[RMDB]
RNA sequence: GGGAACGACUCGAGUAGAGUCGAAAAGGAAGAACAGCUGGACCUUCUCACACUCAGGGCGUGGCUCCUUGCCGCCUCGGGCUCCACGGGUGAAGCGAGGGCCCUCCUCCGGCAGGUGCUCUCGGUGGGUCUAGGAUAUAUUCGUAUAUCCUAGACCAAAAGAAACAACAACAACAAC
Reactivity to DMS in 0.01 (KOAc 150mM, MgCl2 10mM, bicine 150mM(pH8.5), 24C), signal-to-noise 9, nucleotides 027 to 126: g000g000a090a050g010a090a060c090a080g010c040u000g010g000a130c100c010u000u000c020u000c060a120c110a090c060u000c060a080g000g000g010c090g030u000g010g000c040u010c080c080u000u000g010c030c040g010c040c020u000c080g010g010g000c030u000c020c040a070c080g000g000g000u010g010a080a110g010c020g010a040g000g000g010c010c010c010u000c050c020u010c110c080g010g020c140a040g000g010u010g020c010u000c010u000c020g010g010u010g010
Reactivity to 2A3 in 0.01 (KOAc 150mM, MgCl2 10mM, bicine 150mM(pH8.5), 24C), signal-to-noise 6, nucleotides 027 to 126: g050g020a030a070g010a100a040c020a040g040c030u060g030g040a080c010c000u050u020c040u020c010a050c000a010c020u070c050a040g030g020g010c050g050u040g040g000c010u050c020c020u060u100g020c010c020g010c000c010u040c020g010g040g010c010u010c020c020a060c030g050g000g020u100g070a090a010g120c010g000a020g000g010g000c010c000c000u020c000c010u070c020c020g040g000c050a010g030g050u150g020c000u000c000u010c020g040g080u080g110
The data come from the RNA Mapping Database (RMDB), library OK2TST. Structure probing data (DMS and 2A3) for a 177-nucleotide construct. The RNA was probed in 150 mM KOAc, 10 mM MgCl2 and 150 mM bicine (pH 8.5) at 24 C.